The record gives the reactivity of an RNA of 207 nucleotides to DMS. The data come from the RNA Mapping Database (RMDB), library PDB130. Reactivities are rounded to 0.1 and cut off at 0 and 3. The reactions ran in a buffer of 150 mM KOAc, 10 mM MgCl2 and 150 mM bicine (pH 8.5), at 24 C.

RNA sequence: GGGAACGACUCGAGUAGAGUCGAAAACCCAAGCUUACUAUUCCCAACACCCAAACGACUCAUUAAUAACCGCACAAUCUCGAUCCAACAAUGAUUAAUCCAACUAACAUCCAAACAAAUAAUAGCUAUUCACAACCAAAAAGGCCAAACCUGAUCACUUGCUAUUUCUGUUCGCAGAAAUAGCAAGAAAAGAAACAACAACAACAAC
Reactivity to DMS in 0.01 (KOAc 150mM, MgCl2 10mM, bicine 150mM(pH8.5), 24C), signal-to-noise 1, nucleotides 027 to 156: c010c000c010a080a220g000c090u000u000a090c050u020a090u000u030c020c000c020a040a130c090a070c030c030c000a080a080a110c040g020a110c090u000c050a120u020u000a020a070u020a060a130c020c020g040c030a070c080a100a050u000c060u000c010g020a010u000c040c000a080a120c090a080a100u010g030a070u000u000a030a060u010c000c010a000a010c160u010a050a050c070a060u000c000c020a010a040a040c000a050a060a010u000a050a040u000a000g070c080u000a090u010u000c110a070c030a070a090c030c000a120a040a050a030a030g000g020c000c040a010a050a090c020c000u000g030a260u020c060a200